Conditions: 150 mM KOAc, 10 mM MgCl2 and 150 mM bicine (pH 8.5), 24 C. The record gives the reactivity of an RNA of 207 nucleotides to 2A3.
RNA sequence: GGGAACGACUCGAGUAGAGUCGAAAAGUGAUGCAGGUCGAGAGUGAGUCUUCUCUCGCAAAUACCGGGCUCAACAAAUAAUAAGUGCAAACAACAUUGUACCUUUUGCUCGUAAGCAAGUAGCUGUAGCUUAAUUGCCGAAACGCCUCUUAUAGGUCCCAGUUAUUCUCUUCGGAGAAUAACUGGGAAAAGAAACAACAACAACAAC
Reactivity to 2A3 in 0.01 (KOAc 150mM, MgCl2 10mM, bicine 150mM(pH8.5), 24C), signal-to-noise 2, nucleotides 027 to 156: g060u050g030a040u070g000c020a030g000g040u090c010g000a000g000a000g020u050g070a050g030u000c050u220u030c000u050c010u000c030g020c040a010a010a010u090a010c010c020g080g000g020c000u000c060a040a080c030a060a110a080u260a030a020u140a120a040g020u030g040c060a010a000a140c020a100a000c010a120u020u110g050u100a030c020c010u050u130u050u090g010c000u020c080g060u050a040a050g050c000a050a010g010u040a010g000c080u090g030u140a000g020c000u090u150a070a080u140u070g060c020c000g040a060a060a000c060g010c030c030u100c060u080u150a100u070a270g010g030u010